[RMDB]
RNA sequence: GGGAACGACUCGAGUAGAGUCGAAAAGAUAUGGACGACUUCGAUAAGCCUCAGUCGGAAACGACUGUAGGCUUUUGACGAAGUGGUCCUAAGUCAAAAGGAUGGGUAAGUUCGCUUACCCAUCCAACAAAAAUCAAUACUUCGGUAUUGAUUUUUGAAAAGAAACAACAACAACAAC
Reactivity to 2A3 in 0.01 (KOAc 150mM, MgCl2 10mM, bicine 150mM(pH8.5), 24C), signal-to-noise 2, nucleotides 027 to 126: g000a010u020a010u060g010g010a020c120g010a010c300u000u030c000g110a120u050a300a050g000c040c000u000c010a000g010u010c000g000g000a160a010a010c000g020a000c010u010g050u080a010g010g000c090u040u000u020u050g000a000c010g000a000a000g000u010g000g020u000c000c000u010a010a010g000u000c000a000a040a130a140g000g000a000u000g000g010g010u000a000a010g020u050u180c290g020c190u000u000a000c000c000c010a010u030c000c000a000a000
Reactivity to DMS in 0.01 (KOAc 150mM, MgCl2 10mM, bicine 150mM(pH8.5), 24C), signal-to-noise 5, nucleotides 027 to 126: g000a010u000a100u010g000g000a010c000g000a020c000u000u000c000g020a080u010a020a020g010c000c000u000c000a000g010u000c000g020g000a020a020a060c010g010a020c000u000g000u010a010g020g010c000u000u000u010u010g010a290c030g000a010a000g010u000g000g020u000c000c000u000a000a080g000u000c000a090a100a130a130g000g000a010u000g000g000g000u000a010a010g010u000u020c220g010c000u000u000a000c000c000c000a000u000c000c000a030a050

The data come from the RNA Mapping Database (RMDB), library TTRDEL.
The record gives the reactivity of an RNA of 177 nucleotides to 2A3 and DMS.
Reactivities are given for positions 27 through 126.
The RNA was probed in 150 mM KOAc, 10 mM MgCl2 and 150 mM bicine (pH 8.5) at 24 C.
High DMS reactivity at an A or C suggests that its Watson-Crick edge is free.
2A3 adducts were read by reverse transcription with SuperScript II with manganese.